[RMDB]
RNA sequence: GGGAACGACUCGAGUAGAGUCGAAAAGAUAUGGAGAGGAACCGCUGAUGACCACUAGUAUAUCGGAAACGAUAUACGAAUGCAAGGCGCUAACUCUCCUAAGUCAAAACGGUUCUUCGGAACCGAACUAAUGAUGUCUGUUCGCAGACAUCAUUAGAAAAGAAACAACAACAACAAC
Reactivity to 2A3 in 0.01 (KOAc 150mM, MgCl2 10mM, bicine 150mM(pH8.5), 24C), signal-to-noise 4, nucleotides 027 to 126: g020a010u060a050u130g000g010a000g000a000g040g020a000a020c010c000g000c020u030g030a300u180g070a110c020c030a020c050u000a000g020u010a010u000a000u010c000g020g000a090a060a020c000g000a000u000a000u010a010c000g000a060a010u040g000c030a030a110g010g010c020g020c020u200a190a010c000u020c000u010c000c000u000a000a010g000u000c020a010a000a040a090c020g010g020u010u000c020u040u060c140g070g000a000a020c000c000g020a030a000
Reactivity to DMS in 0.01 (KOAc 150mM, MgCl2 10mM, bicine 150mM(pH8.5), 24C), signal-to-noise 6, nucleotides 027 to 126: g000a050u000a300u000g000g010a020g020a030g010g000a090a190c300c020g000c000u000g010a110u010g010a130c300c010a010c030u000a240g000u000a000u000a010u000c000g010g000a130a090a190c000g010a010u010a000u000a000c020g000a080a030u000g000c040a050a110g010g000c010g000c030u000a050a240c010u000c000u000c000c000u000a010a090g010u000c040a060a050a090a130c030g000g000u000u000c000u000u010c180g010g010a010a000c010c000g010a020a090
Chemical mapping of a 177-nucleotide RNA with 2A3 and DMS.
Reactivities are given for positions 27 through 126.
The data come from the RNA Mapping Database (RMDB), library TTRDEL.
2A3 adducts were read by reverse transcription with SuperScript II with manganese.